[RMDB]
RNA sequence: GGGAACGACUCGAGUAGAGUCGAAAACUGCCCUGGGUUUUCGCUGUCUUACAGAUUGACUGUGUUCAAUUAGUUCGUCUCUUAAUCUGAUGGAAAAUGUGAAAUUUGUAAGGGCGGAUAACUAACGCGAUAAGUUAACUUUCGAGUUAAUUUAUCGAAAAGAAACAACAACAACAAC
Reactivity to 2A3 in 0.01 (KOAc 150mM, MgCl2 10mM, bicine 150mM(pH8.5), 24C), signal-to-noise 9, nucleotides 027 to 126: c070u120g020c000c010c000u040g070g020g000u010u010u000u010c010g000c010u040g090u160c010u020u040a040c010a010g010a020u020u020g040a040c030u070g030u030g050u150u040c010a080a090u060u040a080g040u030u040c040g090u010c060u000c000u080u080a130a140u050c030u050g030a040u040g030g070a050a080a060a060u090g060u020g060a070a030a040u030u030u030g050u040a020a020g000g000g000c010g000g000a040u070a040a030c030u020a090a020c100g020
Reactivity to DMS in 0.01 (KOAc 150mM, MgCl2 10mM, bicine 150mM(pH8.5), 24C), signal-to-noise 7, nucleotides 027 to 126: c170u030g010c010c000c010u000g000g010g010u010u000u000u000c000g020c000u000g000u050c040u000u010a120c010a010g000a020u000u000g010a130c130u020g020u030g010u010u010c050a060a060u020u010a050g000u000u000c100g010u010c040u020c070u010u010a050a050u030c030u000g010a100u010g000g010a030a020a060a050u020g000u000g000a140a030a040u000u000u010g010u010a040a010g000g000g000c000g000g000a020u020a020a030c040u010a060a110c220g020